[RMDB]
RNA sequence: GGGAACGACUCGAGUAGAGUCGAAAAAAAUUAUGGUCGCCGGCACGUAUGUGCACACCGAGAAUGACACUCUUUCGCCGUCAACCGAGUCGGUAGUCUUGCACAUCAGGAAUCCGUCUGCGUUGAAAACCCUAAUUGACUUCGGUCAAUUAGGGUUAAAAGAAACAACAACAACAAC
Reactivity to DMS in 0.01 (KOAc 150mM, MgCl2 10mM, bicine 150mM(pH8.5), 24C), signal-to-noise 2, nucleotides 027 to 126: a080a080a070u010u010a050u010g010g020u010c020g010c090c030g000g000c080a060c110g000u040a030u020g020u000g040c050a090c090a090c080c010g000a070g000a060a070u010g010a040c080a090c110u000c140u000u000u000c080g000c030c070g000u000c050a080a080c130c040g000a110g000u000c000g000g020u000a060g030u030c060u000u010g000c060a020c060a090u020c030a050g010g000a070a120u000c020c020g000u000c060u000g010c090g000u000u000g010a080a060
Structure probing data (DMS) for a 177-nucleotide construct.
For DMS, 1,224 sequencing reads were counted.
Reactivities are given for positions 27 through 126.